[RMDB]
RNA sequence: GGGAACGACUCGAGUAGAGUCGAAAAAGCCAUCGCGAGUACUACGGUACUCGCGAUGGCAGGAUCGUGUCCCUGGGAGGCGGAUAGGAUUCAGCACUCUAGAAUUGUCUCACCAUUUGAAUAGGUGCUGCUCAGCCCUUUUGAGUCUGUCAUCGGAAAGACCAUGGCUUUCUCGCUUUUCAUCUUUUUGGAUGGCUGCUUGUCGCAAUAUUGUCUUCUUCGCUUUAGACAAGACACCACCACCAUCGUACGCGAUGGUGGUGGUGAUCGAGCAAUUCGUUGCUCGAAAAAGAAACAACAACAACAAC
Reactivity to 2A3 in 0.01 (KOAc 150mM, MgCl2 10mM, bicine 150mM(pH8.5), 24C), signal-to-noise 2, nucleotides 027 to 266: a050g060c020c030a020u040c020g020c020g070a020g020u010a000c030u060a030c260g120g000u020a000c000u010c040g000c050g010a000u010g000g000c010a020g000g030a050u130c020g030u090g080u040c040c010c050u010g010g030g030a030g020g050c040g000g020a040u110a070g060g060a010u110u050c020a010g010c010a060c020u280c030u030a080g110a170a140u100u080g080u050c060u030c090a230c080c050a170u250u120u120g110a120a040u050a080g000g020u010g040c030u020g030c010u000c050a020g000c010c000c020u010u140u090u290g060a070g060u090c150u030g020u060c040a000u030c030g020g100a130a060a050g040a020c040c050a040u060g040g000c010u120u230u130c130u090c010g010c060u080u230u220u160c100a080u080c070u190u130u060u120u120g170g020a020u020g000g000c010u020g000c050u080u100g040u130c030g000c080a050a070u080a150u210u070g020u020c050u070u010c010u100u160c110g040c120u150u120u060a050g010a050c060a040a000g050a010c010a010c040c020a000c040c000a000c000c000a000u020c000g030u070a040c200g010c020g080a040u020g010g020u020g000g000u000g000g000u000g010a000
Reactivity to DMS in 0.01 (KOAc 150mM, MgCl2 10mM, bicine 150mM(pH8.5), 24C), signal-to-noise 3, nucleotides 027 to 266: a130g010c000c000a020u020c020g090c010g060a040g010u020a010c000u000a090c170g010g020u020a000c010u000c030g050c000g010a000u010g010g010c010a010g010g000a080u010c110g010u010g010u000c000c010c020u010g010g000g000a060g010g010c100g000g020a070u010a060g000g010a120u010u010c040a040g040c050a020c020u020c020u020a080g000a140a100u010u010g010u000c080u010c130a120c180c070a060u010u010u010g000a150a170u020a040g010g010u000g010c020u010g000c300u010c100a120g010c030c030c080u030u000u000u010g010a040g000u010c050u000g000u000c010a040u010c090g000g020a070a070a080g010a040c120c150a040u000g000g000c010u000u010u010c080u000c090g000c070u000u010u010u000c140a110u010c020u000u000u010u000u010g010g010a030u000g010g010c050u000g010c040u000u010g000u000c080g020c130a060a080u030a130u010u010g000u000c050u010u000c040u020u000c100g000c110u010u000u020a090g020a010c060a030a040g010a210c010a010c000c000a000c000c030a010c030c020a010u000c000g050u020a100c110g040c000g040a010u010g010g010u010g000g050u010g000g010u000g000a000